[RMDB]
RNA sequence: GGGAACGACUCGAGUAGAGUCGAAAAUAUAAGCGCAAUAUGGGCGUCGUUUUCCAGAAUUAUGCGCUGUUUCCACAUAUGACGGUGGCGGAAAACAUUGCCUUUCCCUUGCAGAUGCGGGGGGUGAGAGUGAAAAUGCAUUCGUGCAUUUUCACUCAAAAGAAACAACAACAACAAC
Reactivity to DMS in 0.01 (KOAc 150mM, MgCl2 10mM, bicine 150mM(pH8.5), 24C), signal-to-noise 2, nucleotides 027 to 126: u010a060u020a060a050g020c010g020c000a020a080u010a070u000g000g000g000c080g020u020c220g030u020u000u000u000c010c010a100g010a130a150u000u010a050u000g000c000g030c010u010g000u010u020u000c020c030a040c060a050u000a120u010g020a110c180g000g010u000g000g000c150g010g000a030a010a020a030c030a160u000u000g000c030c000u010u000u000c010c010c000u010u010g030c060a140g010a110u010g010c030g030g000g010g010g000g000u010g000a140
Reactivity to 2A3 in 0.01 (KOAc 150mM, MgCl2 10mM, bicine 150mM(pH8.5), 24C), signal-to-noise 2, nucleotides 027 to 126: u120a000u010a040a050g000c030g000c000a040a030u070a100u250g000g010g030c000g010u050c040g020u050u000u040u000c010c010a030g140a080a120u270u130a060u170g010c030g000c000u000g040u020u100u040c070c000a050c010a050u240a130u230g100a010c070g060g000u060g020g090c010g000g050a030a010a000a000c030a040u030u150g000c000c000u000u050u040c030c000c010u010u110g020c080a080g020a270u130g050c040g000g000g000g020g000g020u050g020a050

Chemical mapping of a 177-nucleotide RNA with DMS and 2A3. Source: RMDB library OK2TST, as collected in RNAgym. For 2A3 the reverse transcriptase was SuperScript II with manganese.